[RMDB]
RNA sequence: GGGAACGACUCGAGUAGAGUCGAAAAGAACGAGAUGCUAAGCGUCUUAUCGCCAUCGGACUGAAAGGUGACGAAUGGAUUAAGGCCCUCCAGAAGACCGUGAGAGCCAUGCAGCAAGAGAAGGAGGCGAAGGAAGACUCUUCGGAGUCUUCCUUCGAAAAGAAACAACAACAACAAC
Reactivity to DMS in 0.01 (KOAc 150mM, MgCl2 10mM, bicine 150mM(pH8.5), 24C), signal-to-noise 2, nucleotides 027 to 126: g000a200a030c140g000a010g000a020u000g000c030u070a080a050g000c160g010u000c040u000u010a130u000c100g000c000c000a080u070c020g030g020a050c050u000g000a050a070a200g000g030u000g000a060c070g000a000a080u020g000g010a110u050u030a120a130g020g020c050c000c000u000c030c050a100g000a130a090g010a230c160c090g010u000g000a010g030a070g030c100c030a060u020g000c110a030g030c070a040a110g000a040g110a020a120g010g020a040g010g000
Reactivity to 2A3 in 0.01 (KOAc 150mM, MgCl2 10mM, bicine 150mM(pH8.5), 24C), signal-to-noise 1, nucleotides 027 to 126: g070a060a010c180g000a040g000a040u140g010c080u170a100a080g060c020g030u000c000u010u100a130u160c050g000c060c000a040u050c030g000g010a000c010u200g020a160a020a080g100g050u060g000a010c010g010a050a040u000g040g050a010u040u050a120a020g010g050c000c000c010u020c020c000a100g010a110a000g030a070c080c000g030u100g030a060g000a000g030c000c000a000u070g000c020a030g040c000a140a000g000a030g000a130a050g050g070a060g020g000